[RMDB]
RNA sequence: GGGAACGACUCGAGUAGAGUCGAAAAAUAGAUACUGGGUUCUAUAUGGUUGGAUCUCAGGUUUUAGGAUUCAGGUAGGUUGACAGAGGUUAAAUACUGUUAGCAAAUAUAAACGUUAUUACCGUGAGCUGAAUCAGUGGUUCACCGCGCCAGAGAAAAUUGCGAUGUAAUUCGUUACAUCGCAAUUAAAAGAAACAACAACAACAAC
Reactivity to DMS in 0.01 (KOAc 150mM, MgCl2 10mM, bicine 150mM(pH8.5), 24C), signal-to-noise 2, nucleotides 027 to 156: a110u010a120g000a130u000a100c010u000g030g030g020u000u000c040u010a100u010a140u010g020g010u010u020g010g000a070u010c020u010c040a170g030g010u000u000u030u000a130g010g000a100u000u000c010a050g040g000u000a030g030g010u000u010g040a050c030a010g000a150g010g010u000u010a080a110a200u000a060c030u010g010u010u000a090g000c040a100a100a070u000a120u000a070a100a120c030g020u000u010a110u000u000a050c040c030g000u020g010a070g000c000u000g000a090a130u000c050a080g030u000g000g010u000u020c020a170c000c070g000c130g030c040c060a140g020a170g000a090a090
Reactivity to 2A3 in 0.01 (KOAc 150mM, MgCl2 10mM, bicine 150mM(pH8.5), 24C), signal-to-noise 1, nucleotides 027 to 156: a000u100a050g040a060u160a170c010u030g040g000g000u080u020c060u020a120u020a090u200g120g010u060u070g040g050a030u000c050u010c070a010g030g000u040u040u060u200a070g020g010a020u000u060c000a000g100g050u080a010g090g000u030u040g000a020c010a010g010a030g040g070u140u190a090a030a010u100a060c020u030g010u040u020a000g060c020a020a180a000u160a020u060a090a200a010c040g020u070u120a070u060u100a090c070c040g040u060g010a000g000c010u000g000a010a010u020c000a010g030u020g030g000u020u070c030a030c020c040g000c020g000c020c060a060g000a000g000a090a100